[RMDB]
RNA sequence: GGGAACGACUCGAGUAGAGUCGAAAAAUGGGGUAAGGCUCCCAGUAGACGACUGGGUUGAUAGGCCGGAUCUGGAAGCCAGGUAACUGGUGGAGGUGACCGGUACUAAUAGGCCGAGGGCUUGUCCAUCGUUGACGAUCUUCGGAUCGUCAACGAUAAAAGAAACAACAACAACAAC
Reactivity to DMS in 0.01 (KOAc 150mM, MgCl2 10mM, bicine 150mM(pH8.5), 24C), signal-to-noise 2, nucleotides 027 to 126: a080u000g020g000g020g010u030a130a130g030g020c010u000c000c000c000a010g010u000a140g000a120c300g000a220c000u000g000g050g000u020u030g030a040u010a060g010g000c090c000g010g020a300u000c020u000g000g020a300a270g000c000c020a020g000g000u030a110a140c020u010g000g000u020g000g000a210g010g020u010g000a130c070c010g000g000u000a030c010u000a000a060u010a110g010g000c030c010g020a150g010g000g000c080u010u010g010u000c000c120

The record gives the reactivity of an RNA of 177 nucleotides to DMS. For DMS, 798 sequencing reads were counted. DMS adducts were read by reverse transcription with MarathonRT. The reactions ran in a buffer of 150 mM KOAc, 10 mM MgCl2 and 150 mM bicine (pH 8.5), at 24 C.